[RMDB]
RNA sequence: GGGAACGACUCGAGUAGAGUCGAAAAUUGAACGUGACGAAGAGGCCUUCCCAUCCAGCGUACUUUCUCUGUCUCACUUGCUGUCGCGUGCAAGUGUGUGCAUCUGUGUCUCCGUGUAUGCGCAUCGCGCCCUGGAGGGAUUCGUCCCUCCAGGGCGAAAAGAAACAACAACAACAAC
Reactivity to 2A3 in 0.01 (KOAc 150mM, MgCl2 10mM, bicine 150mM(pH8.5), 24C), signal-to-noise 4, nucleotides 027 to 126: u130u160g020a030a010c020g020u050g030a010c020g070a080a100g060a090g110g010c000c020u030u030c000c000c010a020u050c030c020a010g040c010g060u030a090c060u080u120u040c060u030c020u050g050u040c000u000c040a040c000u000u050g000c020u050g000u060c030g020c010g030u010g020c020a030a020g000u010g000u020g020u070g000c000a070u020c040u040g060u010g040u040c010u000c030c040g020u030g030u110a050u080g020c040g000c040a040u050c090g000
Reactivity to DMS in 0.01 (KOAc 150mM, MgCl2 10mM, bicine 150mM(pH8.5), 24C), signal-to-noise 2, nucleotides 027 to 126: u040u000g000a040a000c040g030u010g010a000c080g020a080a080g010a170g010g000c040c020u000u020c010c020c030a200u010c050c030a040g000c130g030u050a060c080u000u020u000c010u030c060u010g020u000c000u000c000a020c030u000u000g010c030u010g000u010c110g000c010g000u000g020c020a020a020g020u030g000u010g010u060g000c000a080u000c010u010g030u000g000u010c000u010c030c050g020u000g010u000a040u020g000c060g060c070a030u020c170g030